[RMDB]
RNA sequence: GGGAACGACUCGAGUAGAGUCGAAAACCAAGUUCAGUUAACAGACAAAUACUGCAGUGUUAAUGUAGUAGCUUGGCUUUACGCAGCAAUACUUAAUGGUUGCGCUUGGUUUGUAAAACCUAAUCGCUAGCGAAGGUCUUCGGACCUUCGAAAAGAAACAACAACAACAAC
Reactivity to DMS in 0.01 (KOAc 150mM, MgCl2 10mM, bicine 150mM(pH8.5), 24C), signal-to-noise 7, nucleotides 027 to 129: c030c000a030a020g030u010u040c170a000g030u050u030a040a050c170a050g020a050c050a010a000a020u000a000c020u000g040c000a000g000u060g050u110u060a080a070u000g020u000a020g010u000a000g000c180u030u010g000g000c030u000u000u000a000c050g030c100a070g010c020a000a000u050a120c060u040u080a130a100u070g050g020u010u030g000c040g020c040u000u000g030g030u030u000u040g020u080a050a050a070a100c020c010u000a010a010u040c080g020c080u040a060g040
Reactivity to 2A3 in 0.01 (KOAc 150mM, MgCl2 10mM, bicine 150mM(pH8.5), 24C), signal-to-noise 9, nucleotides 027 to 129: c000c000a000a000g020u050u110c150a030g020u080u080a050a040c040a050g060a000c000a010a020a010u020a010c010u010g000c000a000g030u040g090u300u290a190a160u040g010u020a010g000u000a020g030c140u010u000g020g000c010u030u040u020a020c040g010c030a020g010c010a030a050u090a280c090u140u300a170a080u250g090g000u010u000g000c000g000c000u000u010g010g010u010u000u030g070u070a020a030a010a010c000c000u010a050a040u070c070g030c180u060a020g050